This 177-nucleotide RNA was probed chemically with 2A3 and DMS.
For DMS the reverse transcriptase was MarathonRT.
The RNA was probed in 150 mM KOAc, 10 mM MgCl2 and 150 mM bicine (pH 8.5) at 24 C.
The 2A3 profile rests on 1,340 reads.
The DMS profile rests on 1,014 reads.
RNA sequence: GGGAACGACUCGAGUAGAGUCGAAAAAUGAGCAUUGACGAAUGUGAGAGGAGCGGGCGGCUGAUUGAAGAGGCAGCCGAGCAGCACAGCUUCCUGCCUGACCACAACUCCCAAUACCUGGAUGCCAACUUUCGAUCUCUUUCGAGAGAUCGAAAGUAAAAGAAACAACAACAACAAC
Reactivity to 2A3 in 0.01 (KOAc 150mM, MgCl2 10mM, bicine 150mM(pH8.5), 24C), signal-to-noise 1, nucleotides 027 to 126: a000u110g000a070g000c030a030u000u120g090a080c030g100a110a100u030g000u020g010a050g000a000g080g060a070g000c000g020g020g000c000g010g000c010u010g020a140u120u100g080a120a070g040a030g180g000c000a000g030c020c010g000a070g010c010a010g010c040a020c010a070g000c000u030u070c000c000u000g010c000c020u030g050a050c000c030a020c020a090a070c040u030c040c010c000a010a070u090a090c010c030u010g090g000a020u040g010c010c020a040
Reactivity to DMS in 0.01 (KOAc 150mM, MgCl2 10mM, bicine 150mM(pH8.5), 24C), signal-to-noise 2, nucleotides 027 to 126: a090u020g000a190g010c010a040u000u000g010a070c110g020a030a110u000g030u000g010a040g010a300g010g000a060g040c030g030g010g030c080g010g050c020u000g000a170u010u020g020a060a040g010a130g020g020c000a030g010c120c080g040a020g020c050a130g010c070a070c150a070g000c030u000u020c040c020u000g000c000c010u000g000a150c060c050a020c040a050a110c140u010c020c050c030a110a060u010a030c110c070u000g000g000a050u010g010c050c080a090